An RNA of 177 nucleotides, treated with 2A3 and read out base by base. The RNA was probed in 150 mM KOAc, 10 mM MgCl2 and 150 mM bicine (pH 8.5) at 24 C.
RNA sequence: GGGAACGACUCGAGUAGAGUCGAAAAAAAGAGGCUGAACGUCAGAACUUUAUCGGUGCUCUAGUUGACUUCAGGCUGGAGUCAAGAUUUUCAAAAGCAGGAGCUCCAGUCCUAUUGGUGCCUCAGCGUCGUCGACGACAUUCGUGUCGUCGACGACAAAAGAAACAACAACAACAAC
Reactivity to 2A3 in 0.01 (KOAc 150mM, MgCl2 10mM, bicine 150mM(pH8.5), 24C), signal-to-noise 2, nucleotides 027 to 126: a000a000a000g120a040g000g050c060u050g030a040a000c030g000u000c090a000g060a190a070c000u140u100u100a240u300c010g020g030u020g050c000u000c030u050a130g070u080u060g010a000c000u060u080c000a020g030g040c000u000g010g010a000g020u020c000a020a120g030a100u040u210u180u130c230a010a080a090a000g180c060a030g140g000a010g050c010u000c000c000a000g060u070c060c000u070a150u180u270g030g050u070g000c000c000u010c000a000g000c050